[RMDB]
RNA sequence: GGGAACGACUCGAGUAGAGUCGAAAAUCAGCAUUUGAUGGUACUAUGUAUGGUGCCUUUAUGGAUAAACAAGUGCACCAAGUUCAGUUAACAGACAAAUACUGCAGUGUUAAUGUAGUAGCUUGGCGGACCGUGUAGUUCGCUACACGGAAAAGAAACAACAACAACAAC
Reactivity to DMS in 0.01 (KOAc 150mM, MgCl2 10mM, bicine 150mM(pH8.5), 24C), signal-to-noise 9, nucleotides 027 to 129: u050c020a070g020c030a000u000u020u030g010a130u010g000g000u020a030c020u020a040u040g030u030a070u010g000g030u040g010c020c000u000u000u000a110u030g010g020a160u070a060a090a090c130a040a010g000u000g020c020a120c000c030a030a070g030u000u050c090a090g020u030u030a040a060c090a060g000a080c070a010a050a050u040a010c060u010g010c070a020g030u010g020u040u020a030a050u030g010u040a010g010u000a020g010c030u000u000g000g000c030g000g000a110
Reactivity to 2A3 in 0.01 (KOAc 150mM, MgCl2 10mM, bicine 150mM(pH8.5), 24C), signal-to-noise 9, nucleotides 027 to 129: u080c010a000g040c030a020u010u020u070g060a060u080g010g010u030a020c020u030a040u270g150u080a140u250g050g000u000g000c000c000u010u040u030a100u060g110g010a070u140a070a100a020c050a050a000g020u060g080c000a000c000c010a010a010g020u040u070c040a020g010u030u070a080a030c010a020g200a050c050a050a080a050u160a090c070u060g030c020a050g040u010g010u180u090a060a040u050g050u090a060g000u010a010g040c010u000u010g010g000c030g040g020a030